[RMDB]
RNA sequence: GGGAACGACUCGAGUAGAGUCGAAAAUCAUAGCUUCACCAGCGCGACCUGGUCCUCCACGAGCUGGCCCGCGGCCGCGAGCUCAGCUUUUACCUUCCCGCCCACCUCCUGGCGCAGGUACACCGAAUAUAUGUACCUGUUUCGACAGGUACAUAUAAAAAGAAACAACAACAACAAC
Reactivity to 2A3 in 0.01 (KOAc 150mM, MgCl2 10mM, bicine 150mM(pH8.5), 24C), signal-to-noise 3, nucleotides 027 to 126: u080c010a020u040a110g020c040u160u080c070a050c050c020a010g040c060g010c030g060a070c010c020u030g020g040u030c000c010u010c030c010a050c050g020a020g020c010u010g030g020c010c010c010g020c020g070g090c110c120g010c040g020a000g000c030u050c220a000g010c000u060u060u070u060a050c010c000u040u020c010c000c000g010c020c000c010a060c000c010u030c010c000u020g040g020c040g000c040a000g000g020u020a040c030a020c020c030g070a140a000
Reactivity to DMS in 0.01 (KOAc 150mM, MgCl2 10mM, bicine 150mM(pH8.5), 24C), signal-to-noise 7, nucleotides 027 to 126: u010c070a090u000a100g010c040u000u010c080a070c050c030a080g020c060g000c060g010a090c080c030u000g000g010u000c020c020u000c040c040a100c160g010a040g010c020u000g010g010c010c010c030g020c030g010g030c180c170g010c030g000a030g000c020u010c030a030g000c020u000u000u000u000a080c080c060u000u000c020c030c010g010c040c020c050a120c050c020u000c030c020u000g000g010c030g020c040a030g010g010u000a060c130a120c060c040g010a090a110